[RMDB]
RNA sequence: GGGAACGACUCGAGUAGAGUCGAAAAGAUGUGGUGUUGUAGGACCCUGCCUAAUGCCGUGGAACGAAGCCGAAGUGGUCUGGAACGGCCCGCCGUAGAGGGUGAUAGCCCCGUAGGCGUAAGUUCCGUCACUAGUAAUCUUCGGAUUACUAGUGACAAAAGAAACAACAACAACAAC
Reactivity to DMS in 0.01 (KOAc 150mM, MgCl2 10mM, bicine 150mM(pH8.5), 24C), signal-to-noise 8, nucleotides 027 to 126: g000a090u010g020u000g020g020u000g010u000u010g010u010a050g010g010a100c040c020c050u020g000c030c020u000a070a060u010g010c020c040g020u020g020g000a030a000c000g000a100a300g010c000c000g000a000a010g010u030g010g010u000c000u020g010g060a300a060c010g000g000c000c020c000g030c000c000g030u010a020g000a300g010g000g000u010g010a070u040a050g010c000c000c010c010g000u010a300g000g000c000g000u010a030a300g000u000u000c000c010
Reactivity to 2A3 in 0.01 (KOAc 150mM, MgCl2 10mM, bicine 150mM(pH8.5), 24C), signal-to-noise 3, nucleotides 027 to 126: g100a060u190g040u060g100g010u060g010u100u050g110u080a050g030g030a050c010c000c000u040g040c030c010u060a090a030u090g040c050c010g040u070g010g010a010a020c020g000a060a000g040c000c000g000a010a010g040u070g070g000u000c010u020g000g000a000a000c000g000g000c010c000c000g000c000c000g000u050a010g010a000g070g000g000u020g000a030u020a000g000c010c000c010c000g010u000a000g010g000c000g000u000a010a000g000u000u000c000c000
An RNA of 177 nucleotides, treated with DMS and 2A3 and read out base by base. The reactions ran in a buffer of 150 mM KOAc, 10 mM MgCl2 and 150 mM bicine (pH 8.5), at 24 C. Reactivities are given for positions 27 through 126.